This 177-nucleotide RNA was probed chemically with 2A3 and DMS. 2A3 adducts were read by reverse transcription with SuperScript II with manganese. For 2A3, 5,602 sequencing reads were counted.
RNA sequence: GGGAACGACUCGAGUAGAGUCGAAAAUUCUAUUUUUGUGGGAGGAAGAUGUAAGUCUAAAAUAUGUGAAACAGUUCAUGAUUCCACAUUGUGGAUUGAAAGCACCAGAGCAACUAGACCAGCAGCAGUGAACAAAAGAUUUCGAUCUUUUGUUCACAAAAGAAACAACAACAACAAC
Reactivity to 2A3 in 0.01 (KOAc 150mM, MgCl2 10mM, bicine 150mM(pH8.5), 24C), signal-to-noise 6, nucleotides 027 to 126: u060u020c020u020a100u090u140u010u050u060g050u050g010g030g020a030g030g020a070a030g010a030u040g050u160a060a100g030u000c060u080a040a060a060a030u200a100u130g100u010g080a100a080a030c030a050g010u050u020c030a030u090g080a090u120u060c050c030a020c040a080u040u110g020u010g000g020a020u040u050g100a120a070a020g010c010a010c020c040a010g010a010g060c000a010a030c010u050a030g040a060c010c030a010g030c010a010g020c010a030
Reactivity to DMS in 0.01 (KOAc 150mM, MgCl2 10mM, bicine 150mM(pH8.5), 24C), signal-to-noise 4, nucleotides 027 to 126: u020u000c040u050a040u010u020u010u000u010g010u010g020g030g010a140g000g000a030a020g000a040u030g010u020a060a050g010u030c030u010a060a060a060a070u030a070u030g020u000g010a040a070a110c050a030g000u020u030c050a070u000g000a080u010u040c090c080a030c070a060u000u010g040u010g000g000a020u000u010g010a040a090a100g020c060a030c020c020a030g000a070g000c100a020a060c110u000a050g000a090c040c020a070g020c050a060g010c180a150